[RMDB]
Chemical mapping of a 207-nucleotide RNA with DMS and 2A3. For 2A3, 4,308 sequencing reads were counted.

RNA sequence: GGGAACGACUCGAGUAGAGUCGAAAAGGGUGAGACCUAGGAACCGUAGGGGUAUUCUCAAAGGAAGCUUUUGCAGUGACGCCCAUGUAAGUGGGAUAUAACAACACAACUCGUAUGAGUAGCCUAAUAAAUCGGACCUUCUUCGGAAGGUCCGAAACUUAUUAUCAUAGUUCGCUAUGAUAAUAAGAAAAGAAACAACAACAACAAC
Reactivity to DMS in 0.01 (KOAc 150mM, MgCl2 10mM, bicine 150mM(pH8.5), 24C), signal-to-noise 3, nucleotides 027 to 156: g020g020g020u000g000a110g000a090c040c000u000a150g010g000a080a050c040c040g030u000a090g020g030g000g020u000a050u000u000c020u000c040a110a120a210g020g000a080a090g010c000u000u000u010u000g010c060a080g050u000g020a120c100g020c010c010c010a020u000g010u010a050a150g020u000g020g010g010a150u000a050u010a110a120c040a080a040c050a100c060a050a060c030u000c010g020u000a110u000g000a080g030u000a080g030c030c030u000a060a060u000a050a070a100u000c000g020g010a050c000c000u000u000c020u000u000c300g060g000a030a030g020g020u010c000c000g000a000a010a020
Reactivity to 2A3 in 0.01 (KOAc 150mM, MgCl2 10mM, bicine 150mM(pH8.5), 24C), signal-to-noise 5, nucleotides 027 to 156: g030g010g000u050g040a080g020a050c020c030u040a040g050g040a040a070c040c030g030u060a020g020g030g010g000u030a090u110u060c050u020c030a040a080a010g060g020a050a020g040c020u050u070u090u090g020c060a020g000u020g040a030c060g010c000c000c020a020u080g070u110a100a100g010u020g020g020g010a010u040a010u050a100a040c070a050a030c030a010c010a100a100c030u030c020g070u170a090u200g010a010g020u040a020g020c000c000u080a150a080u140a130a120a030u030c010g000g000a010c000c000u000u010c000u010u030c130g060g000a000a000g020g000u010c000c010g000a000a000a000
It was measured as part of the RMDB library M2RFPK. 2A3 is a SHAPE reagent: it acylates the 2'-hydroxyl of flexible nucleotides of all four kinds.